[RMDB]
RNA sequence: GGGAACGACUCGAGUAGAGUCGAAAAUCUGGUCAAGACGCAGAUUUGGCCGCUAUCAAGCGUAUUGUUGCCGGUACGCAAACCAUGACGGUAUACAAGCCCAUCAGUAAAUUGGCCAAUGAUGCGACGUACGUCACUCCUUCGGGAGUGACGUACGAAAAGAAACAACAACAACAAC
Reactivity to 2A3 in 0.01 (KOAc 150mM, MgCl2 10mM, bicine 150mM(pH8.5), 24C), signal-to-noise 1, nucleotides 027 to 126: u010c010u070g060g080u140c060a000a060g060a060c030g010c010a000g000a010u000u000u010g000g000c000c000g000c060u070a110u270c080a090a010g050c030g020u020a040u060u070g140u040u120g070c110c050g000g030u030a020c000g000c000a030a000a030c050c020a030u090g060a000c010g000g030u030a050u030a170c060a010a080g000c010c000c000a040u040c020a000g040u170a050a110a200u110u190g000g000c030c000a000a030u060g010a000u010g000c000g000a050
Reactivity to DMS in 0.01 (KOAc 150mM, MgCl2 10mM, bicine 150mM(pH8.5), 24C), signal-to-noise 1, nucleotides 027 to 126: u050c020u000g050g000u000c240a040a130g120a190c050g020c000a050g000a220u000u000u020g010g000c000c000g000c120u000a060u000c130a130a100g000c000g020u000a000u000u000g070u000u000g010c240c000g010g000u000a170c040g000c000a140a110a020c070c130a010u000g000a020c130g000g060u000a160u000a050c280a120a220g000c100c000c050a260u000c100a110g000u020a020a260a160u000u000g030g090c010c000a000a010u000g020a200u020g000c000g000a100